[RMDB]
RNA sequence: GGGAACGACUCGAGUAGAGUCGAAAAGAUAUGGAUCAUUCAAGGGAGCGUGCCCAUCUUCUCUAGAGAUUCGGAAACGAAUUCCUAGAGAAGAUGGGCACGCAUCGAUCUUGAUGAUCCUAAGUCAGACUAGAGUAUACUUCGGUAUACUCUAGUCAAAAGAAACAACAACAACAAC
Reactivity to DMS in 0.01 (KOAc 150mM, MgCl2 10mM, bicine 150mM(pH8.5), 24C), signal-to-noise 2, nucleotides 027 to 126: g000a070u010a300u000g000g010a010u000c000a010u010u000c010a000a000g000g000g000a020g020c000g040u000g010c000c000c010a020u000c000u000u000c000u010c000u000a010g010a070g000a020u000u000c000g010g000a120a090a260c010g010a020a010u000u000c030c000u010a000g000a030g000a010a010g000a010u000g000g000g000c000a000c000g000c000a000u000c200g010a040u020c000u000u000g000a030u000g010a010u000c000c010u000a000a070g010u010c060a200